Source: RMDB library OK3TST, as collected in RNAgym.
Chemical mapping of a 207-nucleotide RNA with 2A3.
2A3 adducts were read by reverse transcription with SuperScript II with manganese.
Conditions: 150 mM KOAc, 10 mM MgCl2 and 150 mM bicine (pH 8.5), 24 C.
For 2A3, 519 sequencing reads were counted.
RNA sequence: GGGAACGACUCGAGUAGAGUCGAAAAUGAGGUAAAAUGUACAUUUUUGGAAAAAUGUUAAACAGUUGACUGCCCUCUUAAAGAACAGAGGCACCUUGUGGUCAUUUUGGAGACGUUUUGCCUCCCAUAAAAGAGGGAUGAUCCAGGAGACCUUACAAGCGUUAGCAUCAUUCGUGAUGCUAACGCUAAAAGAAACAACAACAACAAC
Reactivity to 2A3 in 0.01 (KOAc 150mM, MgCl2 10mM, bicine 150mM(pH8.5), 24C), signal-to-noise 1, nucleotides 027 to 156: u060g010a010g000g000u010a050a000a020a070u070g040u090a000c000a050u000u000u000u080u210g040g030a020a110a000a000a000u000g000u040u060a100a060a000c030a070g070u010u010g070a020c020u110g000c010c000c000u000c000u120u240a200a210a060g040a080a010c010a010g010a000g000g000c040a060c000c070u100u130g020u050g020g020u010c010a080u060u070u120u020g030g000a200g010a040c010g000u000u000u070u000g000c000c000u040c000c000c000a040u280a000a100a020a000g300a030g000g000g000a020u020g000a040u040c070c000a020g040g000a000g050a010c000c000u060u190a080c070a060